[RMDB]
Record summary:
Chemical mapping of a 177-nucleotide RNA with DMS and 2A3. Conditions: 150 mM KOAc, 10 mM MgCl2 and 150 mM bicine (pH 8.5), 24 C. The 2A3 profile rests on 5,802 reads. The DMS profile rests on 17,296 reads. For 2A3 the reverse transcriptase was SuperScript II with manganese.

RNA sequence: GGGAACGACUCGAGUAGAGUCGAAAAGGCGCUGGAGAUGUACACGGGUUUGCCCCCGUAUCUGUGUACUAUCUCUUUUUAUACCCCUGGGAUAGGUGGAGUGGGGGCGGUCUGGGUUUGGCGGGUGGUGUAUUUAUAAUUUCGAUUAUAAAUACACAAAAGAAACAACAACAACAAC
Reactivity to DMS in 0.01 (KOAc 150mM, MgCl2 10mM, bicine 150mM(pH8.5), 24C), signal-to-noise 4, nucleotides 027 to 126: g000g000c000g000c000u000g000g000a000g000a000u000g000u000a000c000a000c000g000g000g000u000u000u040g010c040c000c000c000c010g010u020a010u010c000u000g010u010g000u000a020c010u050a020u000c000u000c000u010u020u020u010u010a070u040a210c060c030c020c080u010g000g000g010a110u020a060g000g010u020g000g010a100g010u010g010g000g010g010g010c060g000g000u020c140u010g000g010g000u010u030u020g010g010c120g000g000g010u010g010
Reactivity to 2A3 in 0.01 (KOAc 150mM, MgCl2 10mM, bicine 150mM(pH8.5), 24C), signal-to-noise 5, nucleotides 027 to 126: g070g010c010g010c020u010g010g000a000g000a000u000g000u010a000c000a000c000g000g000g000u000u000u060g040c000c000c000c000c000g010u010a040u000c010u000g010u000g000u000a000c010u010a030u010c000u010c000u040u020u010u010u030a160u070a060c010c010c000c020u050g050g000g010a050u070a050g070g070u090g050g040a080g020u120g010g010g000g010g000c020g000g010u060c060u020g010g030g040u090u130u070g060g040c070g010g010g010u030g070